Chemical mapping of a 177-nucleotide RNA with DMS.
The reactions ran in a buffer of 150 mM KOAc, 10 mM MgCl2 and 150 mM bicine (pH 8.5), at 24 C.
RNA sequence: GGGAACGACUCGAGUAGAGUCGAAAAGUUUGAAUUAAUUGUUCUCCUGGCUUUUUCAUAUGUUACAGGAGUUCCACAGGAAUUAACUAGAUGUUUUACAGGUGGAUCAGUAGUACGUCAGCAUUGGUCAGGGUACCGUAUUCGUACGGUACCCUGAAAAAGAAACAACAACAACAAC
Reactivity to DMS in 0.01 (KOAc 150mM, MgCl2 10mM, bicine 150mM(pH8.5), 24C), signal-to-noise 1, nucleotides 027 to 126: g000u000u000u000g010a110a120u020u010a070a060u000u000g000u000u010c000u010c000c000u000g020g000c050u010u010u010u000u040c140a080u000a040u000g010u000u000a120c030a020g030g000a070g030u000u000c010c100a050c070a130g030g000a040a080u010u010a060a090c040u000a140g030a070u020g010u000u000u010u020a110c050a090g000g000u020g000g010a060u000c040a050g030u000a100g030u000a060c060g000u020c050a050g020c090a080u000u000g000g010